[RMDB]
RNA sequence: GGGAACGACUCGAGUAGAGUCGAAAAUGAACGGAUAGCCGCGCUCUUUGAGCCACGGUGUUAACUGCGCCGGGGAGUUUGGGUUGUUCAGGCCAGUGAUGUCGGCCAUUUCUUCGAUAAUCUGCGGUUUGCGCGCUUCUGCGAGGGCCAGCGCCGAGAGAUACGUCUGGUUCGCCAGACGUAUCUCAAAAGAAACAACAACAACAAC
Reactivity to 2A3 in 0.01 (KOAc 150mM, MgCl2 10mM, bicine 150mM(pH8.5), 24C), signal-to-noise 1, nucleotides 027 to 156: u070g000a050a010c030g000g060a170u100a110g050c010c010g000c050g130c050u050c050u130u100u240g050a120g000c000c020a070c030g030g030u070g010u010u010a110a110c130u110g030c010g010c010c000g000g030g070g000a000g010u000u150u070g030g020g000u050u110g040u050u000c130a050g000g000c050c030a000g080u110g130a050u070g010u130c050g000g010c030c000a010u120u150u060c070u050u030c010g070a090u030a230a090u030c000u100g030c040g130g000u020u090u260g070c110g020c000g050c070u060u070c030u060g000c080g010a120g010g020g000c020c000a030g000c030g000c000c000g030a050
Chemical mapping of a 207-nucleotide RNA with 2A3. The RNA was probed in 150 mM KOAc, 10 mM MgCl2 and 150 mM bicine (pH 8.5) at 24 C. 2A3 adducts were read by reverse transcription with SuperScript II with manganese.